[RMDB]
RNA sequence: GGGAACGACUCGAGUAGAGUCGAAAACCCGCCAACGCAGAUAGAUAAAGAAAACGAGGAGAAGAAGGAACUCACCUGUCGUCGUCGACGAAUAGUGAUUCCGGUGAGAAAGGAGCUGCCAGCACUACAUGCUGUAUGACUUCGGUCAUACAGCAUGAAAAGAAACAACAACAACAAC
Reactivity to 2A3 in 0.01 (KOAc 150mM, MgCl2 10mM, bicine 150mM(pH8.5), 24C), signal-to-noise 1, nucleotides 027 to 126: c000c000c000g000c000c020a130a070c030g000c130a010g020a180u110a040g100a010u200a150a140a040g050a080a120a010a000c050g040a010g090g030a100g000a070a000g030a050a030g090g010a020a020c020u010c010a010c000c030u090g020u000c000g000u010c050g190u100c090g040a010c000g020a050a040u060a060g070u050g050a040u100u010c070c080g000g010u040g010a060g000a020a080a060g070g020a020g010c010u050g030c020c010a010g010c020a010c000u160a040
Reactivity to DMS in 0.01 (KOAc 150mM, MgCl2 10mM, bicine 150mM(pH8.5), 24C), signal-to-noise 2, nucleotides 027 to 126: c000c000c030g030c120c070a050a040c080g010c080a040g000a080u000a070g020a110u010a020a120a060g000a040a090a040a070c090g010a040g020g000a050g000a060a040g010a080a110g000g020a060a020c190u000c000a040c040c030u000g000u000c030g010u000c020g010u000c200g010a040c000g000a020a040u020a050g010u000g000a070u000u000c000c040g020g000u020g010a020g000a040a040a010g000g020a020g000c110u020g000c060c050a040g020c060a040c110u000a130